[RMDB]
RNA sequence: GGGAACGACUCGAGUAGAGUCGAAAAGAGCGUCGAGAGACGAAGAGAAGUGCAUUGAUCCACAACGGAGAACGUAAUAAUGCACACCUGUGGAUUAGUGUCCGGAACAACGGGCACAAGAGGCAGACCCGUGGCUAAUAUUCGUAUUAGCCACGGGAAAAGAAACAACAACAACAAC
Reactivity to 2A3 in 0.01 (KOAc 150mM, MgCl2 10mM, bicine 150mM(pH8.5), 24C), signal-to-noise 3, nucleotides 027 to 126: g080a030g040c000g010u000c000g000a000g020a020g000a090c040g040a100a000g100a030g080a210a070g010u010g010c010a010u000u100g020a060u090c000c000a030c090a110a030c190g010g010a120g020a100a020c070g000u030a010a080u070a090a040u110g060c050a020c000a020c010c020u050g000u030g020g100a080u010u100a140g010u000g000u000c020c000g000g110a080a060c100a030a000c050g000g000g010c000a000c000a000a010g020a010g000g000c020a010g030a140
Reactivity to DMS in 0.01 (KOAc 150mM, MgCl2 10mM, bicine 150mM(pH8.5), 24C), signal-to-noise 3, nucleotides 027 to 126: g040a080g020c020g000u010c010g000a250g000a250g000a050c030g000a060a070g000a090g000a110a120g040u000g030c000a000u080u000g000a140u000c000c020a030c100a040a080c140g030g000a060g010a080a080c200g050u010a100a090u010a010a050u000g040c070a030c060a030c190c000u000g000u010g000g000a300u000u000a060g010u000g000u000c000c000g000g020a090a110c210a130a120c030g000g000g000c010a000c000a020a030g000a300g000g010c010a010g000a300
This 177-nucleotide RNA was probed chemically with 2A3 and DMS. Conditions: 150 mM KOAc, 10 mM MgCl2 and 150 mM bicine (pH 8.5), 24 C. For 2A3 the reverse transcriptase was SuperScript II with manganese. For DMS the reverse transcriptase was MarathonRT. The DMS profile rests on 3,879 reads.